[RMDB]
RNA sequence: GGGAACGACUCGAGUAGAGUCGAAAAAGGAGAGAGAAAGAUUCGAGCCCGAAUUCCAUCCAAUUUAGGUUGAAUUGCGGCAGGCCAUUCUUUGAUUGAACCUUCUUUGUACUUAUUGGCCAACAUCACCAUGGACGGGAUUCGUCCCGUCCAUGGUAAAAGAAACAACAACAACAAC
Reactivity to DMS in 0.01 (KOAc 150mM, MgCl2 10mM, bicine 150mM(pH8.5), 24C), signal-to-noise 1, nucleotides 027 to 126: a060g020g000a040g010a210g000a060g000a050a060a070g000a020u000u010c050g000a080g030c060c020c010g000a030a050u000u010c060c100a050u010c030c020a100a190u020u020u000a090g020g000u010u010g000a060a010u000u000g000c050g010g010c190a110g020g030c050c030a050u000u000c020u010u000u000g000a150u010u000g000a120a220c050c020u000u000c010u000u000u000g000u000a060c080u000u000a060u000u000g000g000c050c010a060a040c180a110u000c130